[RMDB]
RNA sequence: GGGAACGACUCGAGUAGAGUCGAAAAUCCACCAGGUGAACAGUUUAAGCACCUCGUGCCUCUUAUGCAUAAGGGGGCUGCGUGGCCUAUUGUUAGACGACGUAUAGUGCAAAUGUUGUCAGACACUAAACCGGCAUGUUCGCAUGCCGGAAAAGAAACAACAACAACAAC
Reactivity to 2A3 in 0.01 (KOAc 150mM, MgCl2 10mM, bicine 150mM(pH8.5), 24C), signal-to-noise 2, nucleotides 027 to 129: u000c000c000a080c010c050a040g010g000u030g010a010a040c000a030g000u000u170u120a060a000g050c000a000c080c010u000c000g050u020g010c000c000u000c000u090u030a090u160g120c030a040u090a090a070g020g020g000g020g020c000u000g020c030g000u090g050g000c060c010u030a090u050u040g090u150u090a000g000a000c000g000a000c050g110u040a060u000a120g140u090g000c040a000a000a050u150g150u000u000g020u030c040a090g020a000c010a120c040u000a000a000a100
Reactivity to DMS in 0.01 (KOAc 150mM, MgCl2 10mM, bicine 150mM(pH8.5), 24C), signal-to-noise 1, nucleotides 027 to 129: u030c000c000a130c110c120a060g080g000u010g030a000a000c110a140g020u000u000u000a000a000g020c130a000c030c050u000c200g010u030g000c030c030u040c080u060u040a100u000g060c240a090u060a050a020g050g030g040g000g000c050u000g050c000g050u000g000g040c170c050u030a090u000u090g000u000u060a110g040a050c020g010a000c090g030u020a040u040a000g030u050g030c060a140a040a050u050g090u030u030g030u000c040a150g030a110c050a080c030u040a000a130a200
The data come from the RNA Mapping Database (RMDB), library 15KLIB. An RNA of 170 nucleotides, treated with 2A3 and DMS and read out base by base. DMS adducts were read by reverse transcription with MarathonRT. For 2A3 the reverse transcriptase was SuperScript II with manganese.